Structure probing data (2A3) for a 207-nucleotide construct.
Reactivities are given for positions 27 through 156.
It was measured as part of the RMDB library OK3TST.
RNA sequence: GGGAACGACUCGAGUAGAGUCGAAAAAGCCUCUAAAGUUGAGUACCCAACGUUGAACUCAGGCGUACGUGAUUACACUGAAUUUCAAUCACAGCUAUUAGAGCGUUGGUUAUCUACCGAUGAAGUCAUUGAUAAUUACCUUGUGCAUUAUAAAACCCAAGUUGCCUAGGUUCGCCUAGGCAACUUGAAAAGAAACAACAACAACAAC
Reactivity to 2A3 in 0.01 (KOAc 150mM, MgCl2 10mM, bicine 150mM(pH8.5), 24C), signal-to-noise 1, nucleotides 027 to 156: a010g030c000c000u030c010u130a190a060a020g000u020u060g040a060g050u100a060c010c000c000a000a000c000g010u030u120g150a060a020c020u020c040a040g030g020c050g060u050a090c090g000u040g000a050u000u080a130c120a000c110u130g010a180a300u020u270u300c080a060a000u070c000a000c020a000g010c010u070a080u230u070a080g050a000g050c010g000u040u000g010g000u020u020a060u030c060u010a000c000c000g140a050u160g070a060a000g000u060c000a100u060u050g030a060u120a160a070u150u110a050c120c090u080u100g020u070g030c030a010u040u080a050u100a170a120a040a010c100c000